[RMDB]
RNA sequence: GGGAACGACUCGAGUAGAGUCGAAAAUCGCUCUUCGGAGCGACAAUAGACCUUUGUGUAGGCAUCUGUACGGGAGAAGUAGGCACCCAUUGGGUGCCGUUCUUCGAAGAACGUACAGGUUGCCUACACUCUGGUUAUAAUCUGUCUUCGGACAGAAAGAUACCUUAUAGUUCGCUAUAAGGUAUCUAAAAGAAACAACAACAACAAC
Reactivity to 2A3 in 0.01 (KOAc 150mM, MgCl2 10mM, bicine 150mM(pH8.5), 24C), signal-to-noise 7, nucleotides 027 to 156: u030c000g010c000u010c000u020u120c290g150g000a000g010c000g000a000c010a000a130u200a090g060a030c000c010u020u010u010g000u000g000u000a000g000g000c000a010u000c010u010g010u000a000c010g020g000g020a040g010a010a000g020u080a060g000g000c000a000c010c020c090a270u160u300g010g000g000u000g000c000c010g000u100u040c000u000u000c000g000a040a010g010a030a000c000g000u000a000c000a000g000g000u010u080g000c000c000u000a010c000a000c000u000c000u010g000g000u000u030a030u040a040a110u040c000u000g010u000c010u020u060c200g110g010a000c000a000g010a050a050
Reactivity to DMS in 0.01 (KOAc 150mM, MgCl2 10mM, bicine 150mM(pH8.5), 24C), signal-to-noise 4, nucleotides 027 to 156: u000c010g020c000u000c010u000u010c300g040g010a010g010c010g020a000c030a040a110u000a130g010a030c000c000u010u000u000g020u000g010u000a010g010g020c000a010u000c000u000g020u000a010c000g030g060g010a180g020a030a040g030u000a140g000g020c010a020c000c000c000a300u000u020g060g050g040u000g000c000c000g000u000u000c010u000u000c000g010a140a160g010a120a170c000g010u000a010c000a010g010g010u000u010g030c000c000u000a000c010a000c000u000c020u000g010g020u010u000a080u000a110a120u000c010u000g020u010c000u000u010c300g050g000a040c010a010g000a020a120